[RMDB]
RNA sequence: GGGAACGACUCGAGUAGAGUCGAAAAUUAGCCAGCGGCGCCAGGCAGUUGGUGGUGCAGGAAGCGUUGGAAACGAUGUCCUGGCCUUCGUAUUUGUCAAAGUUAGCGCCUUUAACAAACAUUGGGGCCUGCUCAUAAAUUUCGAUUUAUGAGCAGGAAAAGAAACAACAACAACAAC
Reactivity to 2A3 in 0.01 (KOAc 150mM, MgCl2 10mM, bicine 150mM(pH8.5), 24C), signal-to-noise 6, nucleotides 027 to 126: u080u020a040g110c020c010a050g050c050g040g000c030g020c010c030a050g000g030c010a000g030u060u030g020g050u030g000g040u130g240c020a020g030g040a030a020g100c010g020u070u120g080g090a090a140a020c030g010a040u200g070u050c010c000u010g020g000c000c000u060u100c000g080u020a090u040u180u040g020u000c050a140a060a030g020u080u100a050g080c010g040c000c000u030u060u040a060a050c020a040a080a020c040a060u070u130g030g000g030g000
Reactivity to DMS in 0.01 (KOAc 150mM, MgCl2 10mM, bicine 150mM(pH8.5), 24C), signal-to-noise 3, nucleotides 027 to 126: u010u020a170g030c030c010a090g010c100g000g010c040g030c010c080a080g030g010c040a030g010u000u000g010g010u010g000g000u000g030c010a060g000g000a060a080g020c090g000u000u030g010g000a110a080a050c020g000a040u060g030u010c010c010u010g010g000c000c000u000u010c040g010u030a040u020u030u010g000u000c030a090a050a090g000u030u030a140g000c070g000c110c010u000u020u010a080a070c070a060a040a110c070a110u010u000g040g000g000g000